Description:
Chemical mapping of a 207-nucleotide RNA with DMS and 2A3. It was measured as part of the RMDB library M2RFOK. For DMS, 3,787 sequencing reads were counted. The 2A3 profile rests on 2,561 reads.
[RMDB]
RNA sequence: GGGAACGACUCGAGUAGAGUCGAAAAUCAGAAUCAGGCGGGAGUGUUUAGCGCUCCGUAAACACGGUCGUACAUCCAGCCGGUAGCCUGGUUCCUUGCAUUGAGUGAUGUACGGAGUUUAUAGAGCAAAAGAAAGACCUGUUCGCAGGUCUUUCAACGUAAUUACUGGGUUCGCCCAGUAAUUACGAAAAGAAACAACAACAACAAC
Reactivity to DMS in 0.01 (KOAc 150mM, MgCl2 10mM, bicine 150mM(pH8.5), 24C), signal-to-noise 2, nucleotides 027 to 156: u000c040a080g000a060a010u010c010a000g010g030c000g010g020g040a150g030u000g020u010u010u000a100g050c100g050c000u000c010c010g060u000a020a040a060c030a120c070g030g010u010c010g020u000a030c060a040u000c000c030a150g000c050c080g030g020u010a150g010c040c020u000g000g010u000u000c000c020u010u020g030c070a230u010u010g000a190g030u010g010a020u010g000u010a030c020g020g010a110g010u000u000u000a050u000a080g030a080g030c040a090a070a060a200g000a000a030a020g000a020c000c000u010g000u000u010c300g000c000a030g010g000u000c000u000u000u000c010a050a120
Reactivity to 2A3 in 0.01 (KOAc 150mM, MgCl2 10mM, bicine 150mM(pH8.5), 24C), signal-to-noise 3, nucleotides 027 to 156: u110c010a000g030a000a000u000c000a000g010g000c040g040g040g020a090g020u080g020u090u160u140a110g080c050g000c010u010c000c010g000u030a000a060a010c080a020c080g050g020u040c010g000u020a010c000a030u010c020c020a020g040c020c000g020g020u050a010g000c000c010u020g000g000u000u010c020c000u070u130g030c040a110u050u170g080a110g070u100g030a010u010g000u010a010c030g030g020a090g020u090u120u040a130u100a050g050a010g020c050a070a030a050a070g000a000a000a000g000a000c000c010u010g010u040u080c190g000c090a000g000g000u000c000u000u000u000c000a000a000